[RMDB]
RNA sequence: GGGAACGACUCGAGUAGAGUCGAAAAGGUAAUGGGUUUCGAUCUGGAGAUGCUCAUCGCUGAAGUUGAGUACAGCCAGAGCGAGGCGGGGACGAUCGCCACGCUGACCGUGGCGCCGGUGGCAGCGACCUCAUUGGAGAUUCGUCUCCAAUGAGGUAAAAGAAACAACAACAACAAC
Reactivity to 2A3 in 0.01 (KOAc 150mM, MgCl2 10mM, bicine 150mM(pH8.5), 24C), signal-to-noise 4, nucleotides 027 to 126: g120g030u190a140a040u180g090g020g060u020u050u050c020g010a040u010c000u020g020g000a070g020a060u040g030c010u000c010a020u020c020g110c300u300g190a300a040g040u040u010g000a010g000u020a030c030a100g070c040c000a000g000a000g010c010g010a010g000g030c040g000g000g000g020a020c050g030a090u100c030g000c010c000a020c020g020c050u100g120a130c040c050g010u010g020g000c000g010c020c020g030g030u050g000g000c030a010g030c030g070
Reactivity to DMS in 0.01 (KOAc 150mM, MgCl2 10mM, bicine 150mM(pH8.5), 24C), signal-to-noise 7, nucleotides 027 to 126: g010g000u010a090a090u010g010g010g020u000u000u000c020g010a070u000c010u000g000g000a050g020a160u000g010c000u000c020a010u000c030g020c210u010g000a130a160g000u010u000g000a020g030u000a040c300a060g000c000c000a020g000a030g000c030g000a040g010g010c060g010g010g010g020a150c110g000a060u000c020g010c000c010a010c010g020c170u010g000a100c250c020g030u000g000g000c010g020c180c020g000g000u000g000g000c060a100g010c160g000